RNA sequence: GGGAACGACUCGAGUAGAGUCGAAAAUGUUCUUACGUUUGAACUGACGGACAUCGUGCAUUGUCGUAUGGCAGCACCCAGCCAGCGUAGGGCAGUCCUGUCGACUCUUGUUGGCAGGUAUGGCCGCUCGCUGCAUGUAGUUCGCUACAUGCAGCGAAAAAGAAACAACAACAACAAC
Reactivity to DMS in 0.01 (KOAc 150mM, MgCl2 10mM, bicine 150mM(pH8.5), 24C), signal-to-noise 4, nucleotides 027 to 126: u010g010u000u010c030u010u000a100c120g000u000u010u010g000a050a070c070u000g010a140c140g000g000a070c110a050u000c120g010u010g020c050a070u000u000g010u000c040g020u000a080u000g010g000c010a060g000c050a080c010c070c010a090g010c050c010a030g020c030g010u000a040g020g010g010c010a110g000u000c000c000u010g020u000c010g010a010c010u010c280u000u000g030u000u000g010g000c000a000g010g000u010a040u000g010g010c010c020g010c170
Reactivity to 2A3 in 0.01 (KOAc 150mM, MgCl2 10mM, bicine 150mM(pH8.5), 24C), signal-to-noise 3, nucleotides 027 to 126: u040g010u050u030c020u040u100a040c020g050u070u080u160g100a130a060c030u040g040a040c040g040g010a010c010a100u090c080g050u010g000c050a110u130u070g070u080c040g070u180a180u250g010g000c010a010g010c010a070c000c010c000a020g000c020c000a010g000c020g040u040a060g000g000g030c010a000g030u000c000c010u000g010u000c010g020a000c010u120c090u220u300g000u010u000g000g000c000a000g000g000u020a060u040g080g020c000c010g070c040
The data come from the RNA Mapping Database (RMDB), library OK2TRN. An RNA of 177 nucleotides, treated with DMS and 2A3 and read out base by base. For 2A3 the reverse transcriptase was SuperScript II with manganese. The RNA was probed in 150 mM KOAc, 10 mM MgCl2 and 150 mM bicine (pH 8.5) at 24 C. High DMS reactivity at an A or C suggests that its Watson-Crick edge is free. DMS adducts were read by reverse transcription with MarathonRT. The 2A3 profile rests on 3,448 reads.